[RMDB]
RNA sequence: GGGAACGACUCGAGUAGAGUCGAAAAUCUCUUCUAACGCGGUUAUAAUAUAGAACCGUAUUAAUGGUUGCAGCUUUUUCCUCUUCAUGGAAUCGGUAUAGAUUAUGUCGGGGAGACCGACAGCAUACUGACUAUGACUAUUCGUAGUCAUAGUCAGAAAAGAAACAACAACAACAAC
Reactivity to 2A3 in 0.01 (KOAc 150mM, MgCl2 10mM, bicine 150mM(pH8.5), 24C), signal-to-noise 9, nucleotides 027 to 126: u010c000u000c000u050u030c070u080a080a010c070g010c010g000g010u040u040a110u060a300a120u180a050u030a210g140a050a030c000c000g030u010a050u030u140a070a070u120g090g000u050u060g010c050a020g010c060u000u020u050u090u020c010c010u040c030u100u090c040a090u100g090g080a040a020u020c020g000g030u100a100u090a130g040a050u070u050a060u150g040u000c000g000g000g010g050a160g060a050c000c000g020a020c000a000g020c010a020u060a090
Reactivity to DMS in 0.01 (KOAc 150mM, MgCl2 10mM, bicine 150mM(pH8.5), 24C), signal-to-noise 5, nucleotides 027 to 126: u000c020u010c010u020u020c080u010a040a060c100g000c000g010g020u010u000a060u020a160a160u040a170u030a090g010a030a010c000c010g010u000a050u010u010a040a110u010g010g010u000u000g010c050a150g000c050u000u000u000u010u000c020c000u000c080u010u010c090a050u020g000g000a040a040u000c040g000g030u010a050u020a080g000a040u010u020a080u000g010u010c040g000g010g000g020a140g000a120c050c010g000a050c060a060g000c120a040u010a130
An RNA of 177 nucleotides, treated with 2A3 and DMS and read out base by base.
Values cover nucleotides 27 to 126.
Reactivities are rounded to 0.1 and cut off at 0 and 3.
It was measured as part of the RMDB libraries RFM100 and RFMREP.
For 2A3 the reverse transcriptase was SuperScript II with manganese.